[RMDB]
RNA sequence: GGGAACGACUCGAGUAGAGUCGAAAAGUGCAUAAAGGUGAAAAUACCCAGAGAGUUAAGAAGGAAUGUGCAACCAUCCGUCUGUAAAGGCGGUAAAUUGAUGGCUGGCCUGAUAUAAGGCUGGCGCUAUUGUCCGCUAUUUCGAUAGCGGACAAUAAAAAGAAACAACAACAACAAC
Reactivity to 2A3 in 0.01 (KOAc 150mM, MgCl2 10mM, bicine 150mM(pH8.5), 24C), signal-to-noise 2, nucleotides 027 to 126: g060u060g000c020a000u190a090a150a070g150g000u050g060a100a010a030a070u160a040c000c010c000a000g070a000g000a000g100u140u170a160a000g040a080a000g030g030a020a000u050g020u010g000c000a010a110c000c000a030u050c000c000g030u020c000u000g170u050a000a140a200g000g010c000g000g000u030a000a010a010u050u020g030a010u200g140g000c020u000g000g010c000c010u000g010a020u030a050u070a300a030g020g000c010u000g000g020c000g000c000
Reactivity to DMS in 0.01 (KOAc 150mM, MgCl2 10mM, bicine 150mM(pH8.5), 24C), signal-to-noise 4, nucleotides 027 to 126: g010u020g020c020a050u000a030a160a060g010g010u000g010a080a060a060a090u020a110c050c000c020a110g010a160g020a100g010u010u020a060a060g000a110a080g010g000a050a040u010g050u010g010c030a080a100c040c030a080u010c000c000g010u000c000u000g000u070a060a090a030g000g010c020g000g000u030a010a030a060u030u020g010a130u020g010g000c020u000g000g000c000c010u000g020a140u030a130u040a080a020g010g000c000u010g020g000c000g010c140